RNA sequence: GGGAACGACUCGAGUAGAGUCGAAAAGAUAUGGACAGCAAUGACGUGGCUGGACGACGACGUCGGAAACGACAUCAGUCCACCAUAAGACAGCUGUCCUAAGUCAAAAGUAUCGUUCGCGAUACAACUACGGACCUAGGUUCGCCUAGGUCCGUAGAAAAGAAACAACAACAACAAC
Reactivity to 2A3 in 0.01 (KOAc 150mM, MgCl2 10mM, bicine 150mM(pH8.5), 24C), signal-to-noise 2, nucleotides 027 to 126: g020a020u080a060u150g010g010a010c000a020g060c080a160a300u150g000a090c100g030u000g060g000c250u060g000g030a000c020g060a040c110g000a030c060g010u000c010g000g020a070a120a040c010g010a030c020a020u040c000a000g000u000c000c000a000c000c000a010u000a010a020g130a030c030a070g050c020u030g010u030c010c010u000a020a000g020u010c040a010a000a060a150g010u030a010u010c030g010u080u070c300g060c010g130a010u020a010c000a060a030
Reactivity to DMS in 0.01 (KOAc 150mM, MgCl2 10mM, bicine 150mM(pH8.5), 24C), signal-to-noise 1, nucleotides 027 to 126: g040a090u000a300u000g000g040a000c020a000g000c000a160a090u020g000a090c300g000u000g000g000c260u000g000g000a000c000g020a090c240g000a030c040g000u000c000g040g000a130a040a180c000g000a010c000a010u010c000a200g000u020c000c000a000c000c010a000u000a230a050g000a140c160a100g000c000u000g010u000c000c000u000a030a030g000u000c010a030a030a130a120g000u030a000u000c000g020u000u050c210g010c030g010a010u000a010c010a070a110